[RMDB]
RNA sequence: GGGAACGACUCGAGUAGAGUCGAAAAGCCUCCUCGCUUCCAUAGAAAGGGGACGGGGCAGAUCGCAAGUGCUACAAGCGAGCGGUGGUAUCUGUCAAACUAAGCAGCCACUGCACAUCAAUUGACUAAACGAUGCCGAUCUUCGGAUCGGCAUCAACAAUUACCUUUUCUUCGGAAAAGGUAAUUGAAAAGAAACAACAACAACAAC
Reactivity to 2A3 in 0.01 (KOAc 150mM, MgCl2 10mM, bicine 150mM(pH8.5), 24C), signal-to-noise 2, nucleotides 027 to 156: g020c000c020u010c000c000u030c010g020c100u050u000c020c010a080u090a250g150a130a110a030g060g000g020g000a020c000g000g010g010g000c030a000g040a060u030c020g000c040a050a010g030u020g040c020u150a230c050a180a020g100c030g150a050g010c000g000g000u030g040g000u030a020u010c020u010g090u050c050a060a100a090c100u130a000a140g020c010a000g000c000c000a000c000u030g060c000a030c020a080u270c110a110a090u190u240g060a100c050u130a050a100a050c080g000a000u000g020c010c010g000a000u000c010u020u070c150g000g000a000u000c000g000g030c000a000u000c000a000a000
Reactivity to DMS in 0.01 (KOAc 150mM, MgCl2 10mM, bicine 150mM(pH8.5), 24C), signal-to-noise 2, nucleotides 027 to 156: g020c010c000u010c010c010u000c020g050c040u010u020c010c040a160u030a110g030a090a130a140g070g010g000g020a040c000g020g020g030g000c130a070g000a110u010c090g020c020a030a190g000u000g030c050u000a090c050a080a300g010c040g020a160g020c020g000g030u000g010g010u000a080u020c050u000g010u000c020a150a070a200c100u000a080a140g010c020a130g000c010c000a040c000u000g000c030a050c050a140u010c100a080a150u000u010g020a150c080u000a010a140a110c050g030a020u000g030c020c010g000a010u010c000u010u050c300g020g010a000u010c010g060g000c000a000u000c000a010a080

Structure probing data (2A3 and DMS) for a 207-nucleotide construct.
The reactions ran in a buffer of 150 mM KOAc, 10 mM MgCl2 and 150 mM bicine (pH 8.5), at 24 C.
High DMS reactivity at an A or C suggests that its Watson-Crick edge is free.
Values cover nucleotides 27 to 156.
Source: RMDB library M2RFPK, as collected in RNAgym.
2A3 adducts were read by reverse transcription with SuperScript II with manganese.
For DMS, 2,182 sequencing reads were counted.